[RMDB]
RNA sequence: GGGAACGACUCGAGUAGAGUCGAAAAAGUCACCUAUUACGAUAGGUGACAUUUGAACCAGCGAACAAUUCAGUUGCGAAAUUCGAGGUUUCAGUCUGAAUCAUAGUAGCCAUUACGAUGGCUACAACUCACUCCCGACUGUUCGCAGUCGGGAGAAGCACUCACGAUAGUUCGCUAUCGUGAGUGCAAAAGAAACAACAACAACAAC
Reactivity to 2A3 in 0.01 (KOAc 150mM, MgCl2 10mM, bicine 150mM(pH8.5), 24C), signal-to-noise 1, nucleotides 027 to 156: a010g000u000c000a000c000c010u020a050u060u080a090c300g000a000u010a000g000g000u000g000a000c000a000u030u030u150g030a010a010c040c020a040g100c020g000a020a050c000a020a010u020u020c010a010g090u020u150g090c030g040a010a030a070u100u080c030g100a090g160g060u050u000u050c020a010g060u010c020u080g040a030a050u020c050a080u030a130g000u010a000g010c000c040a010u070u070a070c240g060a020u010g000g000c000u000a000c000a030a060c030u040c060a030c000u000c000c010c010g010a010c000u010g080u160u060c210g010c130a000g000u000c000g000g000g000a000g000a000a000
This 207-nucleotide RNA was probed chemically with 2A3.
2A3 is a SHAPE reagent: it acylates the 2'-hydroxyl of flexible nucleotides of all four kinds.
Conditions: 150 mM KOAc, 10 mM MgCl2 and 150 mM bicine (pH 8.5), 24 C.
The 2A3 profile rests on 704 reads.